[RMDB]
RNA sequence: GGGAACGACUCGAGUAGAGUCGAAAACGUCCCCUCGGUAAUGGCGAAUGGGACCCAGAAAUCUCUCUAGAUUCCCAGAGAGAAUCGAGAGAAAGCUGGCUCUCCCUUAGCCAUCCGGGUGGACGUGCCACAUAUCAAACUUCGGUUUGAUAUGUGGAAAAGAAACAACAACAACAAC
Reactivity to 2A3 in 0.01 (KOAc 150mM, MgCl2 10mM, bicine 150mM(pH8.5), 24C), signal-to-noise 2, nucleotides 027 to 126: c000g000u000c000c000c010c000u010c000g000g020u060a100a030u020g000g000c010g030a090a030u030g000g000g020a070c100c000c000a030g020a050a300a100u010c010u000c000u000c010u060a120g010a020u010u020c030c050c200a090g070a000g000a010g010a180a010u000c000g000a000g000a000g000a030a050a010g070c020u010g000g010c000u010c000u040c010c000c000u000u010a000g000c000c000a000u020c000c000g010g020g000u020g010g010a010c010g000u000g010
Reactivity to DMS in 0.01 (KOAc 150mM, MgCl2 10mM, bicine 150mM(pH8.5), 24C), signal-to-noise 1, nucleotides 027 to 126: c030g010u000c000c000c080c000u000c000g000g020u020a100a010u000g000g000c000g010a190a060u000g000g000g010a060c250c000c000a020g000a070a090a230u000c030u010c000u030c000u060a170g020a020u000u000c000c000c160a220g000a140g000a190g020a020a000u000c000g000a040g000a030g000a000a050a080g000c020u000g000g010c000u000c040u000c000c000c020u010u000a300g010c000c020a000u010c000c000g000g020g010u010g000g010a010c020g020u000g000
The record gives the reactivity of an RNA of 177 nucleotides to 2A3 and DMS. Conditions: 150 mM KOAc, 10 mM MgCl2 and 150 mM bicine (pH 8.5), 24 C. For 2A3, 3,267 sequencing reads were counted. For 2A3 the reverse transcriptase was SuperScript II with manganese. Source: RMDB library VIROID, as collected in RNAgym.